Conditions: 150 mM KOAc, 10 mM MgCl2 and 150 mM bicine (pH 8.5), 24 C. An RNA of 177 nucleotides, treated with 2A3 and DMS and read out base by base. For DMS, 5,378 sequencing reads were counted. For 2A3 the reverse transcriptase was SuperScript II with manganese. Source: RMDB library RFMREP, as collected in RNAgym.

RNA sequence: GGGAACGACUCGAGUAGAGUCGAAAACGGUCUGGUGCCGCGUACGGGAUCCGUCCAGCAGGCCCUCGUGGUCGGCAGAUGCAGGGAUCCGCGACGGCAUCGACGUGCAGAGGAGGCGCGCCAGACACCUAAUGUACCUGUUCGCAGGUACAUUAGGAAAAGAAACAACAACAACAAC
Reactivity to 2A3 in 0.01 (KOAc 150mM, MgCl2 10mM, bicine 150mM(pH8.5), 24C), signal-to-noise 1, nucleotides 027 to 126: c040g030g040u010c040u080g010g000u020g020c020c020g000c030g010u040a080c100g040g030g020a010u000c010c010g080u010c030c030a030g020c010a010g030g020c000c050c000u100c150g150u300g020g000u020c000g020g030c030a030g010a070u110g060c110a100g070g020g050a020u030c000c010g000c010g030a250c010g000g000c020a010u030c020g020a040c000g010u020g000c030a040g040a110g240g080a050g050g020c010g000c020g010c030c000a020g010a030c020a020
Reactivity to DMS in 0.01 (KOAc 150mM, MgCl2 10mM, bicine 150mM(pH8.5), 24C), signal-to-noise 4, nucleotides 027 to 126: c100g000g010u010c000u010g050g010u000g010c000c010g010c030g010u010a110c100g010g000g000a000u000c000c010g010u010c050c090a150g040c010a040g000g000c010c000c000u000c260g010u020g010g030u000c000g000g010c050a170g000a100u000g020c160a090g020g010g000a030u000c000c010g010c020g000a090c010g000g000c020a020u000c030g010a040c030g000u000g000c060a110g010a160g010g010a120g000g010c020g010c050g000c020c010a070g000a090c130a140